[RMDB]
RNA sequence: GGGAACGACUCGAGUAGAGUCGAAAACAGGGUGAUGUAACCCGCUGACAACGGGGAUUGAGGCGAGAUCACUAAGCCGAGAUGAUCCUCAAGGUUAAGUACUGAAAGGUUGAAGAACAUGAACCCGCGAUAGUACUUAUUUCGAUAAGUACUAUCGAAAAGAAACAACAACAACAAC
Reactivity to DMS in 0.01 (KOAc 150mM, MgCl2 10mM, bicine 150mM(pH8.5), 24C), signal-to-noise 9, nucleotides 027 to 126: c090a130g010g010g020u000g010a100u000g010u010a110a110c010c010c020g010c040u000g010a090c110a120a170c120g000g000g000g000a080u000u000g010a230g000g010c040g010a130g000a110u010c100a090c300u010a080a210g000c020c020g000a170g010a140u010g000a050u000c030c010u000c030a080a130g010g000u000u000a070a070g010u000a060c040u000g000a090a080a080g000g010u000u000g010a110a080g010a090a050c050a040u000g010a080a110c010c010c010g010
Reactivity to 2A3 in 0.01 (KOAc 150mM, MgCl2 10mM, bicine 150mM(pH8.5), 24C), signal-to-noise 9, nucleotides 027 to 126: c040a050g010g010g020u030g020a080u070g030u070a030a050c000c010c000g000c030u050g020a020c020a080a030c090g000g000g000g020a010u010u050g020a020g010g000c020g010a080g050a210u130c040a050c130u050a100a020g000c000c020g000a020g010a040u260g010a010u010c000c000u000c010a000a010g060g000u030u070a120a040g030u040a090c070u090g100a110a050a030g070g020u070u080g080a130a080g040a100a010c010a030u040g030a050a030c000c000c010g010